[RMDB]
An RNA of 177 nucleotides, treated with DMS and 2A3 and read out base by base.
The reactions ran in a buffer of 150 mM KOAc, 10 mM MgCl2 and 150 mM bicine (pH 8.5), at 24 C.
RNA sequence: GGGAACGACUCGAGUAGAGUCGAAAACACAGGCGACUUAAUCGGAGAGCGGUUACACGCGAGCAAGAUGAAAUUAUUACAUCAGUAGACUCGAGAUUACUACAACUUGCGUUGCUAUCUCAAAUAAUUAACAUAGGUCGUUCGCGACCUAUGUUAAAAAAGAAACAACAACAACAAC
Reactivity to DMS in 0.01 (KOAc 150mM, MgCl2 10mM, bicine 150mM(pH8.5), 24C), signal-to-noise 2, nucleotides 027 to 126: c100a070c140a070g000g010c030g000a060c070u000u000a060a060u000c040g010g020a100g010a120g010c040g020g000u000u000a040c200a110c050g020c010g010a090g010c040a070a090g000a040u010g000a150a090a170u000u000a090u000u000a070c030a010u000c000a050g030u020a060g010a130c030u000c080g020a120g010a070u000u000a110c050u000a040c110a040a100c040u010u000g000c050g020u000u000g040c070u000a100u000c020u010c010a070a090a040u000a040a120
Reactivity to 2A3 in 0.01 (KOAc 150mM, MgCl2 10mM, bicine 150mM(pH8.5), 24C), signal-to-noise 2, nucleotides 027 to 126: c070a000c000a050g040g050c090g020a000c040u100u120a130a030u140c040g070g000a060g000a010g110c120g040g020u100u070a060c080a020c060g020c020g000a030g100c050a160a040g010a000u050g010a050a100a100u300u300a090u130u150a090c000a010u000c010a010g040u000a000g050a070c060u030c110g040a010g000a130u120u070a030c010u030a000c010a070a010c030u000u000g000c000g000u000u070g010c040u040a060u130c000u000c000a060a110a050u210a070a110